[RMDB]
Conditions: 150 mM KOAc, 10 mM MgCl2 and 150 mM bicine (pH 8.5), 24 C.
This 207-nucleotide RNA was probed chemically with DMS and 2A3.
For DMS the reverse transcriptase was MarathonRT.
Source: RMDB library OK3TST, as collected in RNAgym.
2A3 adducts were read by reverse transcription with SuperScript II with manganese.
RNA sequence: GGGAACGACUCGAGUAGAGUCGAAAAUGACUGGAGCUCUAUACUGGAGCUUAUAAUUUCACUUACUAACGCACAAAAUAGAAAUUUAAGAUGCUAUGUCUCAGUUUCGUAAUCUAUUUAGUAUAAGGCGAUAUGGCCUUCGUCAGGAACGGGAACACCUUAGAGAGUAAUUCGUUACUCUCUAAGGAAAAGAAACAACAACAACAAC
Reactivity to DMS in 0.01 (KOAc 150mM, MgCl2 10mM, bicine 150mM(pH8.5), 24C), signal-to-noise 3, nucleotides 027 to 156: u000g010a110c060u000g030g030a060g010c020u000c020u010a110u010a110c180u020g000g020a000g040c020u000u010a030u000a090a100u000u000u000c060a060c080u010u000a080c040u010a040a080c070g030c110a110c100a080a030a070a100u010a080g010a020a030a080u000u000u010a020a070g020a010u020g000c050u010a080u010g000u000c020u010c040a170g030u000u000u020c030g030u000a080a130u000c060u000a030u000u000u010a090g000u000a110u010a060a020g000g010c030g030a140u010a110u010g020g020c000c020u000u000c010g010u000c040a070g010g020a070a070c060g010g010g020a060a090c120a110
Reactivity to 2A3 in 0.01 (KOAc 150mM, MgCl2 10mM, bicine 150mM(pH8.5), 24C), signal-to-noise 3, nucleotides 027 to 156: u100g040a020c040u080g070g010a010g000c010u000c010u060a100u110a230c090u130g020g020a000g000c000u010u040a010u000a010a080u060u100u070c070a030c040u060u140a020c020u080a110a050c100g030c030a020c010a080a080a030a070u080a070g060a040a070a060u090u120u080a100a050g030a050u030g030c030u050a030u180g070u010c000u010c030a030g010u010u020u030c020g020u060a050a080u000c030u040a100u140u150u090a050g020u040a080u030a180a020g030g000c040g030a100u070a090u300g110g000c000c030u020u030c010g040u020c020a040g050g010a050a040c010g000g040g040a030a020c020a070